[RMDB]
RNA sequence: GGGAACGACUCGAGUAGAGUCGAAAAGAUAUGGAUAACGGCGCCACGAGGGUCGUGGAGCUGAAGUCUCGGAAACGAGACCAGCUGCGAAGCGACCUACCCACCGUGGCGCCGUUAUCCUAAGUCACAUCAAGAGAAUCUUCGGAUUCUCUUGAUGAAAAGAAACAACAACAACAAC
Reactivity to DMS in 0.01 (KOAc 150mM, MgCl2 10mM, bicine 150mM(pH8.5), 24C), signal-to-noise 2, nucleotides 027 to 126: g010a040u010a290u000g020g030a000u000a010a020c000g000g010c000g000c000c060a010c000g000a090g020g000g000u000c010g000u040g000g000a300g000c000u000g000a180a070g010u000c000u010c000g000g010a070a090a190c000g010a000g040a010c020c080a040g000c040u010g000c100g020a300a190g010c000g000a010c010c020u010a020c050c010c050a300c200c000g050u000g000g010c010g010c010c000g010u000u010a000u000c000c000u000a020a090g010u010c080a160